RNA sequence: GGGAACGACUCGAGUAGAGUCGAAAAGAUAUGGACCACGGUGUGUUUCGAAGAACUAAAUCGGAAACGAUUUAGGGAGAAAGACAUUGGUCCUAAGUCAAAACUCUGUAGCUUCGGCUACAGAGAAGAAUAUUAAAUUCUUCGGAAUUUAAUAUUCAAAAGAAACAACAACAACAAC
Reactivity to 2A3 in 0.01 (KOAc 150mM, MgCl2 10mM, bicine 150mM(pH8.5), 24C), signal-to-noise 2, nucleotides 027 to 126: g010a020u040a030u090g000g030a020c070c070a130c300g080g060u060g020u010g120u040u050u040c230g150a300a020g000a080a000c000u000a020a000a000u000c020g020g030a050a040a060c010g020a010u000u000u030a000g020g000g000a040g020a000a030a000g030a010c000a050u030u110g000g000u000c000c000u000a100a010g050u010c040a040a020a070a290c010u030c000u000g010u010a020g020c000u050u090c300g180g000c000u010a010c020a010g000a000g000a000a000
Reactivity to DMS in 0.01 (KOAc 150mM, MgCl2 10mM, bicine 150mM(pH8.5), 24C), signal-to-noise 3, nucleotides 027 to 126: g000a010u000a300u000g020g020a000c020c000a080c300g020g050u000g020u000g010u010u000u000c000g020a140a100g000a150a130c000u010a000a010a010u000c000g000g010a070a100a120c020g000a010u000u000u000a020g000g020g000a090g020a020a060a030g000a040c030a030u000u010g010g020u000c000c010u000a010a090g010u000c020a130a120a110a110c000u000c000u000g000u000a010g020c000u000u000c300g040g010c020u000a000c000a020g000a010g000a050a080